This 177-nucleotide RNA was probed chemically with 2A3 and DMS.
RNA sequence: GGGAACGACUCGAGUAGAGUCGAAAAUUAAUAGAUUUCGAUCUAUUAAACAGGCGGAGGCUCGCUCCUAGCGACGGGCGCAAGCGCGCACGGUACAGCGAAUACUGAAUCCCUUCGGGGAUUCAAACUUAUCAUCUUUCUUCGGAAAGAUGAUAAGAAAAGAAACAACAACAACAAC
Reactivity to 2A3 in 0.01 (KOAc 150mM, MgCl2 10mM, bicine 150mM(pH8.5), 24C), signal-to-noise 2, nucleotides 027 to 126: u020u010a010a020u020a000g000a020u040u090u100c170g060a000u000c000u000a010u030u020a060a080a020c020a020g080g050c010g000g050a050g060g040c070u020c050g040c010u000c020c000u050a040g000c010g020a020c010g010g010g000c000g030c040a150a070g150c040g000c000g000c120a020c010g050g050u240a090c020a050g010c020g070a070a030u100a180c100u030g000a000a000u000c000c000c000u000u020c210g030g020g000g000a000u010u000c000a000a020a000
Reactivity to DMS in 0.01 (KOAc 150mM, MgCl2 10mM, bicine 150mM(pH8.5), 24C), signal-to-noise 3, nucleotides 027 to 126: u010u010a000a010u000a030g010a020u000u000u020c170g010a040u000c000u000a000u000u000a010a050a140c090a090g010g000c060g010g010a140g010g020c100u000c040g030c020u000c030c040u000a110g010c030g000a050c040g000g000g000c020g020c020a100a150g000c200g010c010g040c010a020c000g000g000u000a070c070a100g010c010g010a090a060u010a080c180u010g000a040a010u000c000c000c000u010u000c200g020g010g010g000a000u010u000c010a030a040a150